Chemical mapping of a 177-nucleotide RNA with DMS and 2A3. The DMS profile rests on 150,563 reads. Source: RMDB library OK2TRN, as collected in RNAgym. For 2A3 the reverse transcriptase was SuperScript II with manganese. Conditions: 150 mM KOAc, 10 mM MgCl2 and 150 mM bicine (pH 8.5), 24 C. For DMS the reverse transcriptase was MarathonRT.
RNA sequence: GGGAACGACUCGAGUAGAGUCGAAAAGGAUGCAACGUAGUAAUAUGUGUGACCGCUAGCUCUUGAGUUACACAUUACUAGUCGUAAUGCGAUUCAAGAGCUAUAUCGCGUUACGACAUCUGUAUCGCUACUACAGACUAUUCGUAGUUUGUAGUAGAAAAGAAACAACAACAACAAC
Reactivity to DMS in 0.01 (KOAc 150mM, MgCl2 10mM, bicine 150mM(pH8.5), 24C), signal-to-noise 9, nucleotides 027 to 126: g010g000a010u000g010c020a040a120c300g010u000a010g010u000a020a030u010a060u010g020u000g010u000g010a110c240c010g000c050u000a120g010c010u000c010u000u000g000a040g000u000u000a030c020a020c010a020u000u000a000c010u000a100g010u000c040g010u000a000a000u000g010c010g010a020u000u000c020a020a020g000a020g010c020u000a030u000a010u000c000g020c010g020u000u000a000c000g010a020c010a050u000c110u000g020u000a020u000c020g010
Reactivity to 2A3 in 0.01 (KOAc 150mM, MgCl2 10mM, bicine 150mM(pH8.5), 24C), signal-to-noise 9, nucleotides 027 to 126: g030g000a000u010g010c010a020a030c060g050u050a050g000u000a010a060u050a090u140g010u000g010u020g060a140c010c000g010c030u020a020g010c010u020c000u060u070g030a030g020u030u100a000c000a000c000a000u000u010a000c000u020a020g010u000c000g000u000a000a000u000g000c000g000a000u040u050c040a040a010g020a010g050c020u020a040u010a000u100c000g000c000g000u000u000a000c000g000a000c000a020u020c040u020g000u000a010u010c010g000